RNA sequence: GGGAACGACUCGAGUAGAGUCGAAAAAAAGCCAAGGAAAGAUGGAGUGAAGAACCCUUCCCUCUCUUUAUUCACACAGGAGUGGAGGAUUUCCCAAAUGUCCCUAACUGGCUAGCUGGCUUCAGGCUGGGACUCAGUCCCUGCAGUUCCUGCCAGGUCUGUAUCCUCGUUUCGACGAGGAUACAGAAAAAGAAACAACAACAACAAC
Reactivity to 2A3 in 0.01 (KOAc 150mM, MgCl2 10mM, bicine 150mM(pH8.5), 24C), signal-to-noise 1, nucleotides 027 to 156: a000a000a000g030c020c010a010a030g090g000a210a040a050g050a050u180g020g060a050g110u170g040a080a100g000a070a130c010c000c050u000u060c000c000c000u020c000u000c000u170u170u120a150u300u260c110a070c030a040c010a070g010g010a010g010u040g040g010a000g000g000a040u000u030u040c020c000c010a010a010a090u090g020u010c000c000c000u040a080a080c020u020g010g000c010u000a030g080c010u020g080g000c040u100u110c070a110g140g000c020u020g000g010g010a060c080u060c190a140g020u020c000c000c000u000g080c010a000g010u050u000c010c020u010g000c020c000a060g000g060
An RNA of 207 nucleotides, treated with 2A3 and read out base by base.
The reactions ran in a buffer of 150 mM KOAc, 10 mM MgCl2 and 150 mM bicine (pH 8.5), at 24 C.
The 2A3 profile rests on 496 reads.
Reactivities are given for positions 27 through 156.